Chemical mapping of a 207-nucleotide RNA with 2A3. Reactivities are given for positions 27 through 156. For 2A3 the reverse transcriptase was SuperScript II with manganese. The RNA was probed in 150 mM KOAc, 10 mM MgCl2 and 150 mM bicine (pH 8.5) at 24 C. The data come from the RNA Mapping Database (RMDB), library ARCHII.

[RMDB]
RNA sequence: GGGAACGACUCGAGUAGAGUCGAAAAUGCUCUGCUUGGCUGUGUGUCGGUGUGGCCUGCCCCCCUGUAGAGGGGUGUCGUAGGCUACCCGUUGAAGCGAGGGAAACCGGGUCAGGCCGGAAACGGAACAGCCCAUCCUGCGCACGUCCGCCGUUGCCCUAGUAUCGUAGUUCGCUACGAUACUAGGAAAAGAAACAACAACAACAAC
Reactivity to 2A3 in 0.01 (KOAc 150mM, MgCl2 10mM, bicine 150mM(pH8.5), 24C), signal-to-noise 2, nucleotides 027 to 156: u140g000c040u020c010u040g000c010u010u040g050g010c050u010g020u000g000u040g050u180c050g000g020u130g000u000g120g000c000c000u010g000c020c000c000c000c010c000u040g070u180a210g080a000g200g000g020g000u050g010u050c070g000u020a020g000g000c000u000a010c010c000c030g100u060u230g070a060a010g030c030g010a110g050g010g040a050a270a100c230c220g020g020g000u070c090a070g000g150c000c010g000g000a070a040a000c040g000g020a040a040c010a050g020c000c000c000a010u010c010c000u010g060c000g000c010a000c030g040u000c020c020g000c000c000g030u010u060g070c050